[RMDB]
RNA sequence: GGGAACGACUCGAGUAGAGUCGAAAAGAUAUGGAAAGGUUGUAGACAUGACGUACACUCGGAAACGAGUGGAACGUCAACAGCUACACCCUUUCCUAAGUCAAACUACAAGCUUCGGCUUGUAGAACAUGAUACUGACCUUCGGGUCAGUAUCAUGAAAAGAAACAACAACAACAAC
Reactivity to 2A3 in 0.01 (KOAc 150mM, MgCl2 10mM, bicine 150mM(pH8.5), 24C), signal-to-noise 3, nucleotides 027 to 126: g000a020u040a040u120g010g010a000a000a010g000g020u050u010g000u010a040g060a110c230a300u270g010a000c050g000u020a000c000a010c000u010c000g000g030a080a040a040c020g000a000g000u020g000g000a180a000c010g000u000c010a000a010c060a010g030c000u010a000c000a020c010c000c000u000u000u000c000c000u010a050a000g000u010c020a100a090a070c000u030a000c000a000a010g000c000u060u300c300g190g000c010u000u000g010u010a000g000a000a010
Reactivity to DMS in 0.01 (KOAc 150mM, MgCl2 10mM, bicine 150mM(pH8.5), 24C), signal-to-noise 3, nucleotides 027 to 126: g000a040u000a300u010g000g020a000a000a010g000g000u000u000g010u000a000g000a060c140a260u000g000a020c000g040u000a140c000a000c000u000c000g010g000a100a140a200c000g000a010g000u010g030g000a100a000c000g000u000c000a040a070c300a190g000c010u000a000c010a010c080c000c000u000u000u000c000c010u000a000a080g000u000c030a130a150a250c010u010a010c000a020a000g000c000u000u000c300g000g000c000u000u010g020u000a000g000a080a220